Conditions: 150 mM KOAc, 10 mM MgCl2 and 150 mM bicine (pH 8.5), 24 C. An RNA of 177 nucleotides, treated with 2A3 and DMS and read out base by base. 2A3 adducts were read by reverse transcription with SuperScript II with manganese. Source: RMDB library OK1LIB, as collected in RNAgym.
RNA sequence: GGGAACGACUCGAGUAGAGUCGAAAAGAGUAAUGGGCGCACAAGGUGAGAUGAAGCUGUAGUCUCACUGGAAGGACUAGAGGUUAGAGGAGACCCGCCCAAAACAAGAAACAGCUUCAUCAAGAGAACCAGUAAUAGUCUUCGGACUAUUACUGGUAAAAGAAACAACAACAACAAC
Reactivity to 2A3 in 0.01 (KOAc 150mM, MgCl2 10mM, bicine 150mM(pH8.5), 24C), signal-to-noise 6, nucleotides 027 to 126: g080a000g040u150a110a070u070g010g010g000c010g020c030a030c040a120a070g090g030u070g040a090g000a030u010g010a020a010g020c010u010g000u030a030g050u020c010u000c020a060c050u030g030g040a050a050g060g040a030c050u060a040g030a080g080g040u110u060a030g020a090g170g060a010g030a030c000c000c000g010c000c000c000a030a070a010a000c040a010a030g060a040a100a000c000a000g000c000u050u030c010a060u020c010a050a020g100a010g020a090
Reactivity to DMS in 0.01 (KOAc 150mM, MgCl2 10mM, bicine 150mM(pH8.5), 24C), signal-to-noise 5, nucleotides 027 to 126: g000a120g000u010a040a160u010g010g010g050c020g030c180a120c140a120a120g000g000u000g020a130g010a000u000g000a020a010g010c000u000g010u010a150g020u000c010u000c050a120c100u020g000g020a140a080g000g000a080c080u010a090g010a110g000g020u000u010a060g020a190g010g010a100g000a060c020c030c020g030c000c010c020a050a030a070a070c110a050a100g000a080a080a050c000a010g000c000u000u000c020a010u000c050a030a080g000a160g010a090
Background
For 2A3, 8,365 sequencing reads were counted.